[RMDB]
RNA sequence: GGGAACGACUCGAGUAGAGUCGAAAAGUGUAACAGGAAGAAAGUUGCAGCAUAUACGCGGUGAAUUAUUCGGUGUCAUAGGAGUAGAGUCUUUUGGUAAGAUGCUGAUAAUGAGUAGGGGAGAUGAGACUUCGUUAUACUUCGGUAUAACGAAGUCAAAAGAAACAACAACAACAAC
Reactivity to 2A3 in 0.01 (KOAc 150mM, MgCl2 10mM, bicine 150mM(pH8.5), 24C), signal-to-noise 1, nucleotides 027 to 126: g040u010g040u070a090a080c090a110g050g040a080a050g050a080a090a010g060u060u050g030c030a010g040c030a040u070a000u000a160c070g000c030g000g050u060g010a030a030u070u090a060u060u100c020g080g000u010g030u000c010a020u080a120g010g010a040g030u110a030g080a030g120u020c020u040u100u120u050g000g000u000a070a100g000a070u060g000c020u020g000a080u040a100a090u100g060a000g030u040a020g030g020g000g000a080g000a010u110g000a010
Reactivity to DMS in 0.01 (KOAc 150mM, MgCl2 10mM, bicine 150mM(pH8.5), 24C), signal-to-noise 2, nucleotides 027 to 126: g010u000g000u000a070a070c060a090g000g040a110a110g010a060a080a080g000u000u010g010c020a070g030c060a140u010a070u000a030c120g010c120g000g040u010g000a080a040u000u010a090u000u000c080g020g020u010g020u000c050a120u010a080g020g000a020g010u000a020g000a090g000u000c030u000u000u000u000g000g010u000a080a120g030a060u000g010c020u000g000a060u000a030a070u000g010a060g040u000a060g020g010g030g010a070g000a050u000g000a230